[RMDB]
RNA sequence: GGGAACGACUCGAGUAGAGUCGAAAAGCGCAGCAUUACGAUGCUGCGCAAGAACUAUGUGAUCUUAUUAAAAUUAGGUUAAAUUUCGAGGUUAAAAAUAGUUUUAAUAUUGCUAUAGUUUACCCUCGUGCAACGCGCAUGCUACGGCAUGCGCGAAGCUAAUAAUAGUCUUCGGACUAUUAUUAGCAAAAGAAACAACAACAACAAC
Reactivity to 2A3 in 0.01 (KOAc 150mM, MgCl2 10mM, bicine 150mM(pH8.5), 24C), signal-to-noise 1, nucleotides 027 to 156: g010c000g020c050a000g000c020a000u030u030a040c160g120a010u020g010c000u000g000c000g020c000a000a010g000a050a010c090u170a070u160g020u000g000a060u030c060u110u100a130u070u180a250a130a150a110u060u080a030g010g000u050u090a160a110a060u220u220u140c020g050a020g020g000u000u000a010a010a010a010a010u020a050g000u040u000u060u190a130a100u220a070u190u120g000c010u000a000u010a100g080u000u000u080a050c000c000c000u000c000g020u000g040c020a100a060c010g000c000g010c040a000u000g000c080u030a050c140g140g010c040a000u000g000c000g000c000g000a000a000
Chemical mapping of a 207-nucleotide RNA with 2A3.
It was measured as part of the RMDB library OK3TST.
The 2A3 profile rests on 441 reads.
The RNA was probed in 150 mM KOAc, 10 mM MgCl2 and 150 mM bicine (pH 8.5) at 24 C.
For 2A3 the reverse transcriptase was SuperScript II with manganese.